[RMDB]
RNA sequence: GGGAACGACUCGAGUAGAGUCGAAAAUGUACGACCGCAUCACCCUGUACUGCGAAAACAACGUGAAAAUGGUGGAUCGCAUCCAACUAGCGCUGGCAGACAUGAUGCGGGAGUGCGCGGUGCCCAUGCACUCUCAGUUCGAGGACAUAUCGCGCUAAUCAUGCCAUAUGUUCGCAUAUGGCAUGAUAAAAGAAACAACAACAACAAC
Reactivity to DMS in 0.01 (KOAc 150mM, MgCl2 10mM, bicine 150mM(pH8.5), 24C), signal-to-noise 3, nucleotides 027 to 156: u010g020u010a050c040g020a130c010c000g000c010a040u000c000a020c010c030c010u010g030u020a110c030u000g000c020g030a150a080a110a180c030a060a040c030g000u000g000a100a080a040a070u010g040g000u000g010g010a040u000c300g000c000a300u010c000c020a020a040c020u000a060g010c040g010c000u000g000g020c010a030g010a200c060a070u030g010a000u000g010c000g000g020g000a090g000u010g020c000g000c010g020g000u010g020c000c000c010a150u010g000c100a030c030u010c030u000c060a060g000u010u000c090g010a130g030g020a000c030a050u020a010u000c000g020c010g000c000u000a180
Reactivity to 2A3 in 0.01 (KOAc 150mM, MgCl2 10mM, bicine 150mM(pH8.5), 24C), signal-to-noise 5, nucleotides 027 to 156: u180g030u040a020c010g020a030c020c000g010c010a000u000c010a030c020c040c030u040g010u190a300c020u010g050c040g110a090a100a040a070c110a060a060c080g070u120g130a070a070a060a090u140g000g000u010g000g040a060u100c120g000c150a060u050c030c010a030a050c010u030a010g030c000g000c040u030g040g000c000a000g010a020c010a030u160g000a000u000g000c000g000g000g010a000g020u050g000c020g000c000g030g030u070g000c030c000c020a020u120g010c040a060c030u040c010u040c090a110g060u260u160c070g030a050g010g050a010c010a040u080a010u050c030g000c000g000c050u040a060